RNA sequence: GGGAACGACUCGAGUAGAGUCGAAAACUUGUCAACCAGUAAGAUAUCCUUAGAGGUUACUUACCUAAGUCUGGAAGUAAUUAGCUGGCCUUGGUGUUUUAUUUUGAUAUUAGUUGACCGCAUUUACAGCUGUGAUACUUUUCGAAGUAUCACAGCUAAAAGAAACAACAACAACAAC
Reactivity to DMS in 0.01 (KOAc 150mM, MgCl2 10mM, bicine 150mM(pH8.5), 24C), signal-to-noise 2, nucleotides 027 to 126: c050u000u000g010u000c020a040a050c210c130a040g010u000a020a020g000a070u000a030u000c020c030u000u040a090g010a250g000g000u000u010a060c140u010u010a080c030c010u000a040a100g020u000c170u000g010g010a070a060g000u020a080a030u010u020a070g010c010u000g010g000c080c040u000u000g020g000u000g000u010u000u000u020a040u000u010u000u010g010a100u000a070u000u010a050g020u000u000g000a170c000c140g020c160a080u010u010u020a070c260
Reactivity to 2A3 in 0.01 (KOAc 150mM, MgCl2 10mM, bicine 150mM(pH8.5), 24C), signal-to-noise 1, nucleotides 027 to 126: c010u030u090g010u070c010a000a030c030c040a050g000u040a030a030g000a050u010a020u070c010c000u010u140a050g020a070g110g010u020u050a050c040u060u100a170c000c010u050a140a070g100u060c050u020g000g070a000a040g010u070a020a140u080u040a020g030c040u040g010g010c020c030u030u040g000g000u000g010u080u020u060u020a070u020u110u020u020g040a030u020a060u220u070a050g010u010u040g060a030c020c000g000c070a100u140u160u000a160c070
Notes
The record gives the reactivity of an RNA of 177 nucleotides to DMS and 2A3. The RNA was probed in 150 mM KOAc, 10 mM MgCl2 and 150 mM bicine (pH 8.5) at 24 C. Reactivities are given for positions 27 through 126. For DMS the reverse transcriptase was MarathonRT.